The data come from the RNA Mapping Database (RMDB), library OK2TRN. This 177-nucleotide RNA was probed chemically with DMS and 2A3.
[RMDB]
RNA sequence: GGGAACGACUCGAGUAGAGUCGAAAAGGAGGAGUUCUGCCCAGAUUCCGUUAUAUCCCUACGGCAGACUUCGUAUUGCCUGAUAAACAGAAUCUGGUAAUAUAGGGAAUAUGUUUCGGAACUCAGACUACAGGUAUGUAUUCGUACAUAUCUGUAGAAAAGAAACAACAACAACAAC
Reactivity to DMS in 0.01 (KOAc 150mM, MgCl2 10mM, bicine 150mM(pH8.5), 24C), signal-to-noise 9, nucleotides 027 to 126: g010g010a160g010g010a040g010u000u000c010u000g010c300c010c010a020g000a030u000u000c000c020g020u000u000a110u000a080u000c010c280c070u000a210c300g000g010c010a010g010a040c050u010u010c270g010u000a030u000u000g000c000c000u000g000a100u000a030a040a020c040a040g010a020a010u000c000u000g000g010u010a030a030u000a050u000a060g010g010g010a130a120u000a040u000g010u000u000u010c060g010g000a030a030c030u000c030a120g010a240
Reactivity to 2A3 in 0.01 (KOAc 150mM, MgCl2 10mM, bicine 150mM(pH8.5), 24C), signal-to-noise 9, nucleotides 027 to 126: g130g050a050g040g010a010g010u040u000c010u040g090c010c010c000a010g010a030u020u000c010c000g000u030u040a150u020a050u290c040c030c030u040a050c050g000g000c000a020g010a050c030u190u190c160g100u150a100u080u050g000c000c000u030g010a030u070a090a120a010c020a020g030a040a010u000c000u010g020g010u040a080a020u090a020u050a040g070g010g100a100a110u090a030u090g050u010u070u070c020g010g010a020a020c010u010c040a020g060a070
For 2A3, 76,786 sequencing reads were counted. The RNA was probed in 150 mM KOAc, 10 mM MgCl2 and 150 mM bicine (pH 8.5) at 24 C. DMS adducts were read by reverse transcription with MarathonRT. Reactivities are given for positions 27 through 126. 2A3 adducts were read by reverse transcription with SuperScript II with manganese.